RNA sequence: GGGAACGACUCGAGUAGAGUCGAAAAGAGACGUUGUUCGCAACGUCUCGCAAUUUGCGGCGCUCGCGCGCCGCACUGAGAUCGUCGGGAUCCAGACCGACAACACCCAAGAAUUCGUUCUUGGGAAUCUACAUCAGUAAUUCGUUACUGAUGUAGAAAAAGAAACAACAACAACAAC
Reactivity to DMS in 0.01 (KOAc 150mM, MgCl2 10mM, bicine 150mM(pH8.5), 24C), signal-to-noise 2, nucleotides 027 to 126: g010a010g000a000c000g010u000u000g010u000u000c240g010c010a020a000c000g000u000c000u000c000g010c140a060a070u000u000u000g020c000g010g030c000g100c010u010c280g020c300g000c000g030c050c000g000c010a000c090u000g000a280g000a060u000c120g000u000c010g010g010g000a040u000c020c040a140g000a080c020c010g000a010c000a130a090c200a150c010c000c000a000a010g000a030a060u000u000c220g000u000u000c000u010u000g000g000g000a030a030